Source: RMDB library OK2TRN, as collected in RNAgym. An RNA of 177 nucleotides, treated with DMS and 2A3 and read out base by base. The reactions ran in a buffer of 150 mM KOAc, 10 mM MgCl2 and 150 mM bicine (pH 8.5), at 24 C. DMS adducts were read by reverse transcription with MarathonRT. For 2A3, 524 sequencing reads were counted. The DMS profile rests on 1,119 reads.

RNA sequence: GGGAACGACUCGAGUAGAGUCGAAAACAAAGUUACUAUAACUAAAAUUAUGGGGUGGAAAUAAUGAAAAUCACAGUAAACGAUAAAAACGAAGUUAUCGGAUUCGUUAAUACUGGCGGUUUACGCAAAGUACUGAUGCAUUCGUGCAUCAGUACUUAAAAGAAACAACAACAACAAC
Reactivity to DMS in 0.01 (KOAc 150mM, MgCl2 10mM, bicine 150mM(pH8.5), 24C), signal-to-noise 2, nucleotides 027 to 126: c020a060a090a140g020u000u000a120c090u010a170u010a020a060c040u000a100a040a120a110u010u000a020u000g000g020g040g060u000g010g000a120a120a080u000a060a070u000g010a030a020a000a050u010c010a050c000a000g010u000a020a070a040c010g000a010u010a050a040a080a130a080c040g020a040a180g000u000u010a060u000c010g010g040a190u010u000c010g000u000u000a080a070u000a000c010u000g010g000c090g010g010u000u000u020a070c110g010c220a070
Reactivity to 2A3 in 0.01 (KOAc 150mM, MgCl2 10mM, bicine 150mM(pH8.5), 24C), signal-to-noise 1, nucleotides 027 to 126: c060a020a160a020g030u120u100a050c040u220a090u060a190a040c000u080a010a030a230a170u140u140a060u220g030g000g010g010u070g050g050a050a080a160u120a000a000u280g070a120a070a000a000u030c030a030c000a070g000u000a000a120a000c000g010a010u140a030a130a060a000a000c060g020a100a030g300u180u090a200u120c000g010g000a060u080u050c000g010u060u000a040a020u000a040c010u010g000g020c000g000g120u020u000u030a040c060g000c000a030